[RMDB]
RNA sequence: GGGAACGACUCGAGUAGAGUCGAAAAAUACUCUUUUGUGGUUGUGUAGCAACCCUUUGGAGUAUUUUUUUGGAAAAAAUGCUAAAUAUAAGAAAACUCCUCAAACAAGGGAAAGUUCGAGGAGUUCGUUAUAAAUAAGGUUCGCCUUAUUUAUAACAAAAGAAACAACAACAACAAC
Reactivity to DMS in 0.01 (KOAc 150mM, MgCl2 10mM, bicine 150mM(pH8.5), 24C), signal-to-noise 1, nucleotides 027 to 126: a000u000a000c000u000c000u000u000u000u010g000u020g020g000u000u000g010u010g010u010a080g020c010a010a000c000c000c010u010u020u010g000g000a010g000u000a000u000u000u000u000u000u000u000g020g010a000a050a090a080a110a060u040g010c070u000a090a080a090u010a090u020a120a150g010a140a080a030a040c000u000c000c000u000c000a060a000a010c020a030a090g000g010g000a120a080a080g010u010u000c010g020a000g020g000a020g000u000u000c040
Reactivity to 2A3 in 0.01 (KOAc 150mM, MgCl2 10mM, bicine 150mM(pH8.5), 24C), signal-to-noise 2, nucleotides 027 to 126: a000u000a000c000u060c010u010u010u000u010g140u240g040g020u020u000g020u040g120u170a060g090c000a000a000c010c000c020u020u000u010g010g000a000g000u000a000u000u000u010u000u000u010u060g060g060a200a040a040a040a030a010u090g000c010u090a100a180a130u270a200u040a250a000g040a060a150a000a000c000u000c000c000u000c000a010a020a000c010a040a010g020g000g090a120a010a030g000u030u020c020g000a010g020g010a000g000u010u010c000
The record gives the reactivity of an RNA of 177 nucleotides to DMS and 2A3. For 2A3 the reverse transcriptase was SuperScript II with manganese. The data come from the RNA Mapping Database (RMDB), library RFMREP. For DMS, 1,035 sequencing reads were counted. Conditions: 150 mM KOAc, 10 mM MgCl2 and 150 mM bicine (pH 8.5), 24 C.